[RMDB]
The data come from the RNA Mapping Database (RMDB), library M2PK90. Structure probing data (DMS and 2A3) for a 177-nucleotide construct. For 2A3, 2,179 sequencing reads were counted. The reactions ran in a buffer of 150 mM KOAc, 10 mM MgCl2 and 150 mM bicine (pH 8.5), at 24 C. For DMS, 2,286 sequencing reads were counted.
RNA sequence: GGGAACGACUCGAGUAGAGUCGAAAAGACAAAUGCAGCAUAUUAGGCUAAGCAGGAAAGGGACGGUAGGUCCUGGUGUCAGUUCAUACGGUGUGAUGCAUCUGCGUCGUGCACACAUGCACCCAAAUCUGUUUCAACGAUUCGUCGUUGAAACAGAAAAAGAAACAACAACAACAAC
Reactivity to DMS in 0.01 (KOAc 150mM, MgCl2 10mM, bicine 150mM(pH8.5), 24C), signal-to-noise 3, nucleotides 027 to 126: g000a050c060a070a070a070u000g020c020a020g000c030a050u010a100u000u010a100g010g040c040u010a070a070g000c030a050g000g010a090a040a130g010g000g010a010c040g010g010u000a050g020g010u000c050c020u000g000g000u000g000u000c050a070g020u020u010c070a070u040a120c170g010g010u000g000u000g000a170u000g020c040a020u010c080u030g010c130g040u000c080g020u000g000c010a070c100a040c070a060u010g000c080a120c020c010c010a070a070a140
Reactivity to 2A3 in 0.01 (KOAc 150mM, MgCl2 10mM, bicine 150mM(pH8.5), 24C), signal-to-noise 2, nucleotides 027 to 126: g040a010c020a020a040a000u080g010c000a010g000c020a040u080a120u290u150a110g080g000c010u050a070a000g040c000a000g040g030a060a020a070g020g000g010a020c030g080g210u170a110g050g130u010c000c010u020g020g000u010g030u020c030a030g060u000u120c030a020u120a110c060g100g000u020g010u010g020a210u030g000c000a020u010c030u140g040c010g080u140c030g040u030g000c010a020c000a010c000a010u040g080c020a050c030c010c010a000a070a080